[RMDB]
RNA sequence: GGGAACGACUCGAGUAGAGUCGAAAACGAGUCUCCAGCAUUCCUGAACAUGAUAGGUUUUGGAUUCUGAACGAGCACUUGGGAAAAUGUCAGCCGCGCAGGAGUUGCGGAUAUCAUUUCUGGCGUCCAUUGAGCGAAUGUUCGCAUUCGCUCAAUGAAAAGAAACAACAACAACAAC
Reactivity to DMS in 0.01 (KOAc 150mM, MgCl2 10mM, bicine 150mM(pH8.5), 24C), signal-to-noise 3, nucleotides 027 to 126: c050g000a040g000u000c010u000c020c020a040g010c140a030u000u000c010c010u010g010a030a020c030a120u010g030a130u000a130g010g000u000u000u000u000g020g000a010u000u010c020u000g000a130a110c170g020a050g010c110a020c010u010u000g010g010g000a050a050a060a070u000g010u010c120a030g020c030c010g030c040g000c050a210g000g000a120g020u020u010g030c030g000g010a080u000a050u000c100a070u000u010u020c030u000g000g010c080g000u020c100
Reactivity to 2A3 in 0.01 (KOAc 150mM, MgCl2 10mM, bicine 150mM(pH8.5), 24C), signal-to-noise 3, nucleotides 027 to 126: c030g010a000g030u020c000u000c010c030a010g020c020a040u060u040c010c000u020g020a000a000c020a060u240g100a150u240a280g210g000u010u000u030u040g010g000a020u020u000c020u030g050a140a050c080g000a020g010c070a000c040u060u040g030g020g020a040a140a070a080u100g010u050c040a040g010c030c000g000c020g000c040a070g090g300a160g120u160u120g020c010g030g020a030u040a010u070c070a060u060u140u000c030u020g050g040c040g000u030c050